Structure probing data (2A3 and DMS) for a 207-nucleotide construct.
Conditions: 150 mM KOAc, 10 mM MgCl2 and 150 mM bicine (pH 8.5), 24 C.
The 2A3 profile rests on 9,618 reads.
For DMS, 9,275 sequencing reads were counted.
RNA sequence: GGGAACGACUCGAGUAGAGUCGAAAAAAAGACGCGGUUGCCGAUCGGUAUGGAUGCCACCGUGACGGCUCAAUCACACAAGUGCCAACGAUAACGAGGCGCUCGCUACUGCUGCGUAACUGACGGCUAGAUACAGCCAGGUUCGCCUGGCUGUAAAGUAAAUCACUGUAUUCGUACAGUGAUUUACAAAAGAAACAACAACAACAAC
Reactivity to 2A3 in 0.01 (KOAc 150mM, MgCl2 10mM, bicine 150mM(pH8.5), 24C), signal-to-noise 8, nucleotides 027 to 156: a000a000a000g090a010c030g000c010g020g000u050u050g010c010c010g040a090u050c020g030g020u090a080u140g120g020a060u130g040c020c020a040c030c020g040u020g050a070c050g010g000c010u020c050a050a100u120c020a030c020a020c000a150a050g030u020g050c010c010a100a060c090g080a120u110a230a050c080g020a080g010g000c010g010c020u010c050g050c050u120a080c050u090g020c010u020g000c010g040u030a070a050c020u050g060a080c010g010g010c040u050a020g010a080u050a020c000a000g010c000c000a000g030g010u030u030c110g040c070c000u010g000g000c000u000g000u010a010a000a000
Reactivity to DMS in 0.01 (KOAc 150mM, MgCl2 10mM, bicine 150mM(pH8.5), 24C), signal-to-noise 3, nucleotides 027 to 156: a050a060a050g000a080c030g000c020g000g000u000u000g010c010c010g000a110u000c030g030g000u000a100u010g010g000a130u000g010c020c050a050c060c030g020u000g010a240c100g010g000c020u010c060a080a090u000c070a090c060a080c080a100a060g010u010g030c010c000a070a140c040g020a140u010a060a110c050g010a220g020g030c030g030c020u000c030g020c020u010a080c040u000g000c030u000g010c060g020u000a030a070c030u000g010a070c020g010g000c050u000a090g000a290u000a010c000a010g010c000c000a010g020g030u000u010c300g030c020c000u000g000g000c000u000g000u000a010a020a130
The data come from the RNA Mapping Database (RMDB), library M2RFPK.